[RMDB]
RNA sequence: GGGAACGACUCGAGUAGAGUCGAAAAGGUUUCGACAUUGUCUGCGUGAGUAUGAGAAGCGGGUCGAGGACGCAUGGUUAUCUCGUUAACGAUCCAUGCAAAAAAUAAGUGCCAAUUCCAAGAGCACUGUCUCGGCCAAGGCCGACUUCGCCCUCGCCUACUAACAAAACUUCGGUUUUGUUAGUAGAAAAGAAACAACAACAACAAC
Reactivity to 2A3 in 0.01 (KOAc 150mM, MgCl2 10mM, bicine 150mM(pH8.5), 24C), signal-to-noise 3, nucleotides 027 to 156: g140g000u050u020u020c010g010a040c060a190u160u260g080u110c060u120g030c020g020u140g020a040g000u070a170u210g110a070g020a170a010g000c030g000g000g000u000c000g000a010g020g060a030c130g010c000a000u000g040g010u110u300a100u090c020u000c100g150u100u300a130a070c050g020a010u040c000c020a000u000g000c000a000a030a000a000a060a080u200a050a000g000u000g010c020c010a040a170u230u080c040c030a130a030g060a010g020c000a000c010u010g030u000c000u010c000g000g040c010c000a000a050g090g000c030c010g050a100c030u020u040c040g030c000c000c020u020c010g020c000
Reactivity to DMS in 0.01 (KOAc 150mM, MgCl2 10mM, bicine 150mM(pH8.5), 24C), signal-to-noise 3, nucleotides 027 to 156: g050g000u010u000u010c060g030a110c070a160u010u000g000u000c030u000g000c030g020u000g010a080g040u000a060u010g010a050g010a050a020g000c030g010g010g000u010c000g010a300g030g010a110c080g000c000a020u020g000g000u000u000a070u000c060u000c120g040u000u000a070a100c080g000a050u000c010c000a020u000g020c020a000a000a040a110a040a040u010a020a020g010u000g020c010c020a090a190u000u020c190c180a070a210g000a090g040c010a020c010u000g000u000c060u000c000g030g010c010c020a070a160g030g000c040c010g030a030c020u000u000c010g010c010c040c010u000c000g000c110